[RMDB]
RNA sequence: GGGAACGACUCGAGUAGAGUCGAAAACGGAGGAGAAGAAACUUACAAGGAUUCCCCUAGUAACGGCGAGCGAACCGGGACCAGCCCAGCUUGAGAAUCGGGUGGCUUCGUCACCUGAAUUGUAGUCCUUAAUAAUCCCGUUCGCGGGAUUAUUAAGAAAAGAAACAACAACAACAAC
Reactivity to DMS in 0.01 (KOAc 150mM, MgCl2 10mM, bicine 150mM(pH8.5), 24C), signal-to-noise 2, nucleotides 027 to 126: c140g010g010a040g000g010a060g000a100a110g000a100a090a080c100u010u000a060c120a080a080g010g010a150u000u000c020c010c030c030u000a100g000u010a060a070c120g000g000c070g000a090g010c050g000a090a030c050c140g000g000g010a080c060c040a090g010c040c020c010a090g010c110u000u000g010a080g000a080a070u010c020g000g010g030u010g000g010c010u000u010c140g020u010c000a000c010c000u010g000a020a040u010u000g010u000a070g010u020c100
Reactivity to 2A3 in 0.01 (KOAc 150mM, MgCl2 10mM, bicine 150mM(pH8.5), 24C), signal-to-noise 1, nucleotides 027 to 126: c030g020g070a020g000g010a080g030a030a190g040a070a300a000c040u150u170a090c150a110a090g010g000a200u110u080c000c000c000c000u020a040g020u040a050a010c010g000g060c080g030a030g020c030g040a050a000c010c010g000g030g000a010c030c000a020g000c020c020c000a040g020c000u070u070g070a080g030a130a050u040c020g000g000g010u000g030g000c040u170u120c110g000u000c000a000c000c030u000g060a070a070u040u010g060u020a030g050u060c040